[RMDB]
RNA sequence: GGGAACGACUCGAGUAGAGUCGAAAAACUUGCUUGUUAAAUUACUGCGUGGAAUGCCGAUUCCAGAUUUUGAUUUAGACGAUUUUAUUGACGCACCAUGCUAUUGCUUUAACGCUGAGGGUGAUGCCUUCAUAUUAAGCUUCGGCUUAAUAUGAAGAAAAGAAACAACAACAACAAC
Reactivity to DMS in 0.01 (KOAc 150mM, MgCl2 10mM, bicine 150mM(pH8.5), 24C), signal-to-noise 6, nucleotides 027 to 126: a080c050u000u000g000c070u000u010g010u000u010a030a040a060u000u000a080c120u010g010c060g050u000g000g010a080a070u000g010c060c070g000a150u000u000c070c090a090g010a090u000u000u000u000g010a090u000u000u010a100g010a100c130g010a050u000u000u010u000a080u020u000g010a150c300g020c030a060c020c010a010u000g010c020u010a080u000u010g000c130u000u000u010a050a060c100g010c070u000g000a060g000g020g020u000g000a080u000g000c110
Reactivity to 2A3 in 0.01 (KOAc 150mM, MgCl2 10mM, bicine 150mM(pH8.5), 24C), signal-to-noise 4, nucleotides 027 to 126: a020c030u060u060g010c040u080u130g040u030u060a050a050a040u070u060a040c010u050g020c010g010u020g030g020a170a100u080g040c020c020g030a040u070u000c050c020a050g020a100u040u060u060u130g080a050u040u090u130a090g010a100c040g020a030u030u020u030u100a120u050u090g020a020c040g010c000a010c010c000a020u030g030c010u060a080u080u120g050c040u030u070u050a050a000c040g020c050u030g030a050g030g040g020u070g020a050u050g010c010
An RNA of 177 nucleotides, treated with DMS and 2A3 and read out base by base.
The RNA was probed in 150 mM KOAc, 10 mM MgCl2 and 150 mM bicine (pH 8.5) at 24 C.
2A3 adducts were read by reverse transcription with SuperScript II with manganese.
It was measured as part of the RMDB library 15KREP.
For DMS the reverse transcriptase was MarathonRT.